[RMDB]
RNA sequence: GGGAACGACUCGAGUAGAGUCGAAAACGAAUGCUCGUACUUGGGAUUGCACUCAUGAGAAUGAGUGUAACAUAUUAUACGAGCAAAGAUAUGCAUGGAUCCCAAGUACAAAAUUCAUGCAUAUUAAGGUAGACCUAGAUUUCGAUCUGGGUCUACCAAAAGAAACAACAACAACAAC
Reactivity to 2A3 in 0.01 (KOAc 150mM, MgCl2 10mM, bicine 150mM(pH8.5), 24C), signal-to-noise 9, nucleotides 027 to 126: c070g050a110a080u110g010c010u010c010g010u020a040c050u050u060g050g020g130a200u040u010g000c000a000c000u000c000a010u020g060a020g080a160a050u000g000a000g020u000g000u000a000a000c000a000u150a040u140u190a060u030a020c020g000a000g020c000a000a000a000g010a000u010a000u000g000c000a000u000g010g020a020u030c030c020c010a020a020g100u090a100c090a080a140a010a010u030u020c000a000u000g000c000a000u010a020u040u080a100a040
Reactivity to DMS in 0.01 (KOAc 150mM, MgCl2 10mM, bicine 150mM(pH8.5), 24C), signal-to-noise 6, nucleotides 027 to 126: c150g010a140a070u010g010c000u000c000g020u000a000c120u010u000g000g000g010a180u000u000g000c000a010c000u000c010a020u000g010a240g000a170a030u000g010a010g020u000g010u000a000a020c080a130u030a040u020u020a120u020a020c020g000a040g000c030a010a060a070g010a010u010a000u000g000c000a010u000g010g000a020u010c020c020c030a100a100g010u040a110c240a070a030a080a050u010u000c010a000u000g000c000a000u000a010u000u010a090a100
The record gives the reactivity of an RNA of 177 nucleotides to 2A3 and DMS. Values cover nucleotides 27 to 126. It was measured as part of the RMDB library OK1LIB. DMS adducts were read by reverse transcription with MarathonRT.